[RMDB]
RNA sequence: GGGAACGACUCGAGUAGAGUCGAAAACACAGUCUAAAUGCCACCUUUGUGCCCUUCUCCGCACAAACACGGAUGAGUGGUGUCAAUGUUCAGGAUCGGAUGAUUCGCAAAGGGGCUGUCGAUGCUAACUUGAUUACUCCUUCGGGAGUAAUCAAGUAAAAGAAACAACAACAACAAC
Reactivity to 2A3 in 0.01 (KOAc 150mM, MgCl2 10mM, bicine 150mM(pH8.5), 24C), signal-to-noise 3, nucleotides 027 to 126: c020a000c000a010g050u050c040u090a150a140a060u100g030c010c010a250c110c050u000u030u010g040u030g000c020c010c000u030u030c030u000c000c010g010c040a070c050a110a160a000c030a010c020g060g030a090u180g060a060g050u210g070g000u040g020u050c030a060a150u090g080u100u070c020a060g050g050a090u070c020g040g130a090u140g000a040u120u110c010g000c000a000a010a000g000g020g000g000c000u000g000u000c020g010a000u100g040c050u040a040
Reactivity to DMS in 0.01 (KOAc 150mM, MgCl2 10mM, bicine 150mM(pH8.5), 24C), signal-to-noise 3, nucleotides 027 to 126: c090a140c160a110g010u000c040u000a130a110a110u010g010c010c000a090c030c010u000u000u020g000u010g000c020c020c020u000u010c180u000c030c040g000c080a140c100a110a070a080c210a080c070g000g010a040u000g010a020g020u010g020g020u000g000u010c070a060a060u010g000u000u000c100a100g020g000a030u000c050g000g020a120u010g010a060u000u010c010g000c030a010a020a050g020g000g000g020c000u010g000u010c190g000a040u000g020c120u010a060